[RMDB]
RNA sequence: GGGAACGACUCGAGUAGAGUCGAAAAAGCAUGUAUGCGGACUUGAGCAGGCAGGCUGGUUCGACAGCAGGGUAGGCUGCAUGCGCGAUCGAGGGUGGGCUGAGCUCGGGCAAACGAUUGAGCGUGACACAUACUCCCGGUUCGCCGGGAGUAUGUGAAAAGAAACAACAACAACAAC
Reactivity to 2A3 in 0.01 (KOAc 150mM, MgCl2 10mM, bicine 150mM(pH8.5), 24C), signal-to-noise 2, nucleotides 027 to 126: a000g040c020a010u020g010u160a040u160g070c040g040g000a030c060u090u100g030a040g060c000a010g050g070c000a000g030g000c010u040g000g050u140u120c040g070a100c010a050g000c020a000g000g000g100u070a030g060g080c010u030g020c030a060u100g010c080g040c000g030a050u130c060g020a080g000g070g030u160g000g050g000c070u070g050a020g000c030u030c040g050g000g000c060a100a070a050c060g070a080u000u180g010a010g030c060g010u060g060a000
Reactivity to DMS in 0.01 (KOAc 150mM, MgCl2 10mM, bicine 150mM(pH8.5), 24C), signal-to-noise 2, nucleotides 027 to 126: a050g000c050a050u000g030u000a090u010g010c040g000g010a080c080u000u000g010a080g000c020a050g000g010c070a050g020g000c020u000g000g010u000u010c050g010a110c060a060g020c030a100g000g010g030u020a090g000g030c010u000g000c050a060u000g000c030g020c110g000a070u000c060g020a100g010g020g020u010g000g000g030c110u010g000a080g000c040u000c060g000g020g000c160a070a070a080c120g000a140u000u000g000a080g000c100g010u000g010a220
The record gives the reactivity of an RNA of 177 nucleotides to 2A3 and DMS. It was measured as part of the RMDB library OK2TST. For 2A3 the reverse transcriptase was SuperScript II with manganese. DMS adducts were read by reverse transcription with MarathonRT. Values cover nucleotides 27 to 126.